[RMDB]
RNA sequence: GGGAACGACUCGAGUAGAGUCGAAAACUAUGCAGAUUCGUCUGCAUAGAGAGCCGAUGAAGCGGCACUUACACAGCUUCAUACACGUAAGAAGUGCAAUAAAGGGACGAGGGUUCGCCCUCGUCAAAGGAAAAAGUAGAUUCGUCUACUUUUUCCUAAAAGAAACAACAACAACAAC
Reactivity to DMS in 0.01 (KOAc 150mM, MgCl2 10mM, bicine 150mM(pH8.5), 24C), signal-to-noise 8, nucleotides 027 to 126: c000u000a000u000g000c000a000g010a030u000u010c200g010u000c000u000g000c000a010u000a000g000a110g020a210g010c020c020g000a050u000g000a030a010g020c010g020g020c040a030c070u000u000a100c150a070c120a110g000c010u000u000c010a020u000a160c100a070c140g000u000a110a080g000a070a060g020u000g010c050a110a080u020a050a110a130g010g010g000a010c010g000a010g010g010g010u010u020c230g010c000c000c000u000c000g010u000c010a010a040
Reactivity to 2A3 in 0.01 (KOAc 150mM, MgCl2 10mM, bicine 150mM(pH8.5), 24C), signal-to-noise 9, nucleotides 027 to 126: c000u010a000u000g000c000a000g020a040u020u090c100g130u020c080u000g000c000a000u000a000g000a010g000a020g050c010c030g030a050u040g020a020a010g020c020g030g030c070a010c020u080u130a040c110a000c010a070g010c010u010u000c000a010u050a080c100a000c090g080u060a060a020g060a130a020g070u010g000c030a030a110u180a220a140a060g220g050g000a000c000g000a000g010g020g010u040u090c180g110c010c000c000u000c000g000u000c000a000a010
This 177-nucleotide RNA was probed chemically with DMS and 2A3. Reactivities are rounded to 0.1 and cut off at 0 and 3. 2A3 adducts were read by reverse transcription with SuperScript II with manganese. For DMS the reverse transcriptase was MarathonRT. The 2A3 profile rests on 18,955 reads.